[RMDB]
Record summary
An RNA of 177 nucleotides, treated with 2A3 and read out base by base. The RNA was probed in 150 mM KOAc, 10 mM MgCl2 and 150 mM bicine (pH 8.5) at 24 C. The data come from the RNA Mapping Database (RMDB), library OK1LIB. As a SHAPE reagent, 2A3 marks flexible, mostly unpaired nucleotides at the ribose 2'-OH. For 2A3 the reverse transcriptase was SuperScript II with manganese. Values cover nucleotides 27 to 126.
RNA sequence: GGGAACGACUCGAGUAGAGUCGAAAAGACUUCGUCGGCGAUGGCGCGGAAGCGGGCGAAAUCCAGCUGGCGUGGGUACGCCGACCAGCCGGCGAUGAUCAUUUUGGGCCGGUGUGUGCGCGCUGCCGACCGGAUGCGAGUUCGCUCGCAUCCGGUCAAAAGAAACAACAACAACAAC
Reactivity to 2A3 in 0.01 (KOAc 150mM, MgCl2 10mM, bicine 150mM(pH8.5), 24C), signal-to-noise 1, nucleotides 027 to 126: g010a040c020u040u000c000g000u000c020g000g000c010g070a200u120g000g110c100g000c090g060g000a130a000g140c000g020g030g010c000g060a110a000a000u000c000c000a030g090c030u010g000g000c010g050u000g000g000g150u080a060c030g000c000c000g000a010c000c000a010g000c000c000g030g000c070g040a070u080g020a030u040c040a040u000u180u260u150g090g020g000c030c000g000g000u010g030u090g000u070g160c000g000c000g010c000u070g000c010c050